Structure probing data (2A3) for a 207-nucleotide construct. Reactivities are given for positions 27 through 156. For 2A3 the reverse transcriptase was SuperScript II with manganese.
RNA sequence: GGGAACGACUCGAGUAGAGUCGAAAAGGGAUUAGAUACCCCACUAUGCUUAGCCAUAAACCUAAAUAAUUAAAUUUAACAAAACUAUUUGCCAGAGAACUACUAGCCAUAGCUUAAAACUCAAAGGACUUGGCGGUACUUUAUAUCCAUCUAGAGGCUCAUUGCAUUACUUCGGUAAUGCAAUGAGAAAAGAAACAACAACAACAAC
Reactivity to 2A3 in 0.01 (KOAc 150mM, MgCl2 10mM, bicine 150mM(pH8.5), 24C), signal-to-noise 1, nucleotides 027 to 156: g020g000g000a030u090u060a100g030a060u080a120c000c030c030c000a020c030u120a050u030g020c050u090u160a070g050c030c000a030u090a060a080a160c050c070u120a090a080a090u090a010a150u200u150a220a110a110u280u120u090a130a100c020a020a040a130a040c000u050a090u140u140u090g000c030c020a020g020a030g000a130a060c000u000a000c000u030a070g010c000c000a090u100a060g000c010u160u100a140a230a030a140c020u080c150a120a080a080g040g030a050c030u020u020g030g010c000g000g030u000a050c000u000u090u000a090u030a000u080c000c050a050u060c030u010a000g010a010g080g000